An RNA of 177 nucleotides, treated with DMS and 2A3 and read out base by base. The DMS profile rests on 4,467 reads.
[RMDB]
RNA sequence: GGGAACGACUCGAGUAGAGUCGAAAAAAAAAAGAUAUGGACGCUGCUUGCAAUGAUGGGUGGAAUAAUGUAUGUUCGGAAACGAACAUACUAUCCACCUUGAGCAACAGCGUCCUAAGUCAAAAAACAGUAGUACAUACUUCGGUAUGUACUACUGAAAAGAAACAACAACAACAAC
Reactivity to DMS in 0.01 (KOAc 150mM, MgCl2 10mM, bicine 150mM(pH8.5), 24C), signal-to-noise 3, nucleotides 027 to 126: a000a040a050a040a070a100g000a000u000a250u000g000g000a000c010g000c000u000g030c280u000u000g040c010a260a090u020g000a110u010g000g000g020u000g000g000a060a050u010a090a050u000g010u000a000u000g010u000u000c000g010g000a070a040a080c000g020a020a010c000a010u000a010c010u000a070u000c000c010a010c000c010u010u000g000a030g020c010a000a010c010a000g010c010g010u000c010c000u000a000a060g000u010c020a000a040a070a100a100a170
Reactivity to 2A3 in 0.01 (KOAc 150mM, MgCl2 10mM, bicine 150mM(pH8.5), 24C), signal-to-noise 2, nucleotides 027 to 126: a000a000a000a000a000a070g030a020u070a040u050g000g010a000c010g000c010u030g000c090u000u020g010c030a110a300u070g020a020u070g020g000g020u000g040g080a170a160u300a300a050u170g000u010a000u000g000u000u010c000g000g000a050a030a010c000g000a000a000c010a000u000a000c000u000a000u020c000c000a000c010c000u010u010g000a000g000c010a000a010c000a000g010c000g000u000c000c000u000a000a010g030u010c000a040a010a000a000a050a040